[RMDB]
RNA sequence: GGGAACGACUCGAGUAGAGUCGAAAAUCUGAUCGUCAUCUCUGCUACUGAACUCAAGUCACUGGAGUAUAGUGAGCGUUCUGUGAUAGGUUUACUGUCACGCAGUAAACUCGAUCAGUAAUGGCGGGCAGUCCAGAGUAUUCGUACUCUGGACUGCAAAAGAAACAACAACAACAAC
Reactivity to DMS in 0.01 (KOAc 150mM, MgCl2 10mM, bicine 150mM(pH8.5), 24C), signal-to-noise 1, nucleotides 027 to 126: u000c020u000g000a060u020c020g050u000c020a030u000c100u000c050u000g030c050u000a040c050u000g000a020a030c000u000c040a100a180g020u000c140a050c140u000g010g000a070g020u000a060u000a000g020u000g000a040g030c050g020u000u000c010u000g000u000g000a150u000a030g030g000u000u000u000a050c000u000g000u000c130a100c160g010c020a000g000u000a010a000a030c000u000c010g000a060u020c000a000g000u010a040a080u000g000g000c050g000g010

Overview:
Structure probing data (DMS) for a 177-nucleotide construct. Values cover nucleotides 27 to 126. The data come from the RNA Mapping Database (RMDB), library OK2TRN.